[RMDB]
RNA sequence: GGGAACGACUCGAGUAGAGUCGAAAAGUAAAAGCGCAAAAGAAGCUCAGUGCAAGAGCAAGACCUAAGUAUAAAAAUACAGCCAUGAGGUCAAACGCGGAACAAAACCGCGAAAAGGCAAAAAAAACAUAUCCUAUCGUUUCGACGAUAGGAUAUGAAAAGAAACAACAACAACAAC
Reactivity to 2A3 in 0.01 (KOAc 150mM, MgCl2 10mM, bicine 150mM(pH8.5), 24C), signal-to-noise 2, nucleotides 027 to 126: g050u040a050a070a040a000g050c070g000c100a050a080a060a070g150a160a010g000c010u010c060a050g090u060g140c060a070a040g010a000g010c010a020a030g020a000c000c010u040a130a000g040u070a110u080a170a210a050a040a010u120a040c000a010g040c050c010a050u080g070a010g020g000u000c000a010a020a000c000g010c010g000g020a030a000c010a020a060a020a010c010c000g000c000g010a020a050a010a010g030g010c040a060a000a060a000a000a000a000a000
Reactivity to DMS in 0.01 (KOAc 150mM, MgCl2 10mM, bicine 150mM(pH8.5), 24C), signal-to-noise 2, nucleotides 027 to 126: g010u020a090a020a120a080g050c130g000c080a040a050a090a130g030a130a090g030c010u000c020a130g000u000g000c110a090a080g000a030g000c040a060a070g000a020c040c000u020a020a110g010u010a060u020a000a040a100a080a100u000a050c030a090g000c040c060a130u020g020a070g010g000u010c060a020a070a160c010g010c010g000g020a060a130c210a030a030a160a050c000c000g010c000g000a020a010a100a110g000g020c020a000a000a000a000a070a090a030a100
The record gives the reactivity of an RNA of 177 nucleotides to 2A3 and DMS. The reactions ran in a buffer of 150 mM KOAc, 10 mM MgCl2 and 150 mM bicine (pH 8.5), at 24 C. Source: RMDB library M2PK90, as collected in RNAgym. Reactivities are given for positions 27 through 126.